[RMDB]
RNA sequence: GGGAACGACUCGAGUAGAGUCGAAAAGAUAUGGAACCUGCCCCGGGAAUGAGGAGCGAUAAGCUCGUGUCGGAAACGACACCGUGAGCUUUUGACGCUUGUAGUUCCCGGGGCAGGUUCCUAAGUCGUUCUUUUACAUGUUCGCAUGUAAAAGAACAAAAGAAACAACAACAACAAC
Reactivity to DMS in 0.01 (KOAc 150mM, MgCl2 10mM, bicine 150mM(pH8.5), 24C), signal-to-noise 1, nucleotides 027 to 126: g000a170u010a300u010g010g010a000a010c020c020u020g030c000c010c010c000g020g000g000a030a040u010g010a200g010g000a020g010c000g020a130u000a030a020g000c000u000c010g000u000g000u000c000g020g010a120a180a220c020g030a010c010a000c050c300g000u020g000a000g000c000u010u010u000u010g010a250c120g000c000u000u010g010u010a300g010u000u000c020c000c000g000g000g000g010c000a000g000g000u000u010c010c000u010a000a080g000u000c140